[RMDB]
RNA sequence: GGGAACGACUCGAGUAGAGUCGAAAAAAAAAAAGGUUGCCGAAUCCGAAAGGUACGGAGGAACCGCUUUUAUGGGUUAAUCUGCAGUGAAGCUGCAGUAGGGAUACCUUCUGUCCCGCACCCAACAGCUAACUCCGGAGGCAAUAAAGGAAGGAGACGUACCAUUUAUGUUCGCAUAAAUGGUACGAAAAGAAACAACAACAACAAC
Reactivity to 2A3 in 0.01 (KOAc 150mM, MgCl2 10mM, bicine 150mM(pH8.5), 24C), signal-to-noise 1, nucleotides 027 to 156: a000a120a000a000a040a000a000g090g010u010u020g000c000c000g010a030a040u050c020c000g080a080a010a000g010g010u010a010c000g000g000a010g020g000a050a070c110c020g000c010u120u100u030u060a070u120g000g000g000u010u020a020a030u030c000u030g000c010a010g010u060g250a160a030g160c000u000g000c000a000g010u010a020g000g010g000a010u050a100c030c000u060u080c020u030g000u000c020c020c000g000c010a000c000c000c010a030a070c050a030g000c000u010a030a020c000u000c000c000g000g020a010g000g000c010a000a000u050a020a050a020g060g000a030a000g020g000a050g000a030
Reactivity to DMS in 0.01 (KOAc 150mM, MgCl2 10mM, bicine 150mM(pH8.5), 24C), signal-to-noise 1, nucleotides 027 to 156: a000a020a050a030a050a190a080g070g020u000u010g000c000c010g000a070a200u000c040c020g020a060a110a030g010g000u020a000c020g010g010a020g010g000a080a110c060c040g000c140u000u000u000u020a060u000g060g040g000u000u000a070a170u000c020u000g000c010a050g000u000g010a080a090g070c000u000g000c000a020g020u000a030g010g000g000a060u000a020c110c110u010u020c040u000g020u000c020c010c000g020c230a110c010c020c000a030a060c090a040g030c010u000a180a190c030u000c000c000g000g000a190g010g030c020a050a060u010a050a020a020g000g000a110a060g010g000a300g050a190